[RMDB]
RNA sequence: GGGAACGACUCGAGUAGAGUCGAAAAAGCCUGUGUGUCAGCCCAGCACUUGCUGCGUGGGAGGUGGAUUCCGGAGGGACGCGUAUGGUCAGGUCGAGCAGGUAUAGUUUUGUGAGUCGGUACACCUCAGGGCGCAUGUUCCAGAGGGUAGCAAGGGCAUCAUAGUGAGCUUCGGCUUAUUGUGAUGAAAAGAAACAACAACAACAAC
Reactivity to DMS in 0.01 (KOAc 150mM, MgCl2 10mM, bicine 150mM(pH8.5), 24C), signal-to-noise 4, nucleotides 027 to 156: a140g020c020c020u000g020u000g030u000g010u010c040a130g010c030c010c000a230g000c010a070c030u010u000g020c060u000g010c040g030u000g010g010g000a080g010g030u020g020g010a190u010u000c040c040g020g010a160g020g010g010a060c050g020c050g020u010a070u000g000g010u010c040a070g040g020u000c060g010a120g020c020a050g000g020u000a100u000a080g020u000u000u000u000g020u010g010a110g050u010c020g000g030u000a070c050a060c010c010u000c000a110g010g010g020c010g010c100a100u000g020u000u000c020c000a120g000a120g010g020g020u000a060g020c050a090a060g010g010g020
Reactivity to 2A3 in 0.01 (KOAc 150mM, MgCl2 10mM, bicine 150mM(pH8.5), 24C), signal-to-noise 4, nucleotides 027 to 156: a020g080c040c020u060g020u010g010u020g040u060c050a040g070c000c010c010a020g010c040a020c040u080u130g020c050u010g000c020g100u070g020g040g020a040g020g020u060g020g000a050u130u010c050c020g010g010a020g000g040g020a020c040g020c010g050u080a070u120g040g010u040c050a020g030g010u050c030g000a010g010c030a020g050g000u020a030u030a030g030u020u020u020u080g010u020g040a030g040u040c030g020g010u030a030c040a120c020c010u010c020a010g010g010g000c070g000c090a110u200g040u110u050c000c000a010g010a010g040g020g010u020a010g020c040a020a040g030g000g000

An RNA of 207 nucleotides, treated with DMS and 2A3 and read out base by base. 2A3 adducts were read by reverse transcription with SuperScript II with manganese. The RNA was probed in 150 mM KOAc, 10 mM MgCl2 and 150 mM bicine (pH 8.5) at 24 C. The DMS profile rests on 15,651 reads. It was measured as part of the RMDB library OK3TST. For DMS the reverse transcriptase was MarathonRT.